Structure probing data (2A3) for a 207-nucleotide construct. For 2A3, 2,544 sequencing reads were counted. Reactivities are rounded to 0.1 and cut off at 0 and 3.

[RMDB]
RNA sequence: GGGAACGACUCGAGUAGAGUCGAAAAGAUAAGCUAACAGCAAAAAGGAACCGAUUCCCACCAAGUUCGGAAAGAGAUACCGGGCGAGGCGCUGAAGAAAGAAUCUCGCUUCAGACACCCCAAGGACAUGACCUUAAAAUGUUCGCAUUUUAAGGAACUCAAUUACAAAGUUCGCUUUGUAAUUGAGAAAAGAAACAACAACAACAAC
Reactivity to 2A3 in 0.01 (KOAc 150mM, MgCl2 10mM, bicine 150mM(pH8.5), 24C), signal-to-noise 4, nucleotides 027 to 156: g040a070u140a090a020g010c030u060a080a020c040a090g030c040a070a070a080a070a040g070g020a080a030c050c040g050a100u050u000c020c010c000a000c010c010a050a010g010u020u010c030g010g070a140a080a010g120a020g010a030u060a110c000c010g020g010g010c040g000a040g010g030c070g000c060u070g020a030a010g030a060a300a040g050a110a150u060c060u040c210g030c010u020u010c010a030g040a080c020a090c020c010c000c040a020a030g050g010a020c040a160u160g070a080c000c000u000u010a000a000a000a000u000g000u020u040c160g000c100a010u020u000u000u000a000a000g000g000a020a020